RNA sequence: GGGAACGACUCGAGUAGAGUCGAAAAGAAAGAAAGAAAGUUCAUUGUUUAUCGGAAACUUUAAACUAUAACCAUUCAAACUUUUCCAGAAGUUAGUUUGAAUAGAAAUUAGAAAGAAACUUCUGAAUGACCUUGGCACCGUUCGCGGUGCCAAGAAGGUAUGGUAGUACUUCGGUACUACCAUACCAAAAGAAACAACAACAACAAC
Reactivity to 2A3 in 0.01 (KOAc 150mM, MgCl2 10mM, bicine 150mM(pH8.5), 24C), signal-to-noise 1, nucleotides 027 to 156: g080a000a030a010g050a020a040a000g010a070a180a040g030u050u050c120a200u130u130g030u120u150u080a150u150c080g020g050a000a030a100c010u020u030u060a040a150a000c030u050a000u050a200a010c000c020a000u010u000c000a000a010a010c000u020u000u010u030c070c040a000g000a000a000g000u000u000a000g000u000u010u000g000a010a020u040a140g040a040a000a000u110u060a070g130a030a000a020g010a000a010a000c000u000u000c000u000g030a060a140u050g030a010c020c000u000u010g010g000c000a020c000c010g010u070u050c150g020c000g070g000u000g010c000c000a010a000g000a000a000

This 207-nucleotide RNA was probed chemically with 2A3. The 2A3 profile rests on 1,329 reads. Values cover nucleotides 27 to 156. The data come from the RNA Mapping Database (RMDB), library M2RFOK. Conditions: 150 mM KOAc, 10 mM MgCl2 and 150 mM bicine (pH 8.5), 24 C.